The record gives the reactivity of an RNA of 207 nucleotides to DMS and 2A3. For DMS, 3,230 sequencing reads were counted. The 2A3 profile rests on 2,436 reads. Source: RMDB library M2RFPK, as collected in RNAgym. DMS adducts were read by reverse transcription with MarathonRT.
[RMDB]
RNA sequence: GGGAACGACUCGAGUAGAGUCGAAAACUAGGGGGUAUUCCGGUGUGGGAUACUUAGCAAUAUGCAACGCUAAUUGCAUAAGAUUGUAGGACGGAAUUUACAGUCUUGGUUUUUCAAACCUGAAACUUGUGGUAGUACGCGUUCGCGCGUACUACAAGCCUACUAAACUGUUCGCAGUUUAGUAGGCAAAAGAAACAACAACAACAAC
Reactivity to DMS in 0.01 (KOAc 150mM, MgCl2 10mM, bicine 150mM(pH8.5), 24C), signal-to-noise 2, nucleotides 027 to 156: c030u000a060g000g010g020g040g020u000a030u000u000c000c020g000g030u010g080u010g040g000g010a040u010a030c020u000u010a080g020c080a080a130u000a060u000g010c000a020a060c140g020c160u000a090a150u000u000g000c000a060u000a080a070g000a050u000u000g020u020a020g010g010a280c050g020g000a040a300u000u010u000a030c050a040g000u000c010u000u010g000g010u010u010u000u030u000c140a060a080a120c030c020u010g020a140a060a130c070u000u000g000u010g020g020u000a010g030u000a010c000g030c020g020u000u000c300g020c010g030c000g000u000a000c000u000a000c010a030a140
Reactivity to 2A3 in 0.01 (KOAc 150mM, MgCl2 10mM, bicine 150mM(pH8.5), 24C), signal-to-noise 4, nucleotides 027 to 156: c040u080a050g050g020g010g020g010u010a010u050u020c020c030g200g040u160g030u170g070g010g020a000u060a040c000u030u080a020g020c010a020a080u020a020u110g020c030a050a020c070g000c180u140a090a060u060u010g000c010a020u010a020a030g030a050u000u100g020u050a020g020g080a020c070g050g060a060a060u070u050u070a020c030a020g040u010c000u030u040g010g010u010u020u000u030u130c070a050a070a040c010c010u040g030a050a050a100c040u080u130g050u100g160g000u000a000g000u010a000c000g010c000g030u020u050c090g020c000g000c000g060u000a000c000u000a000c000a000a000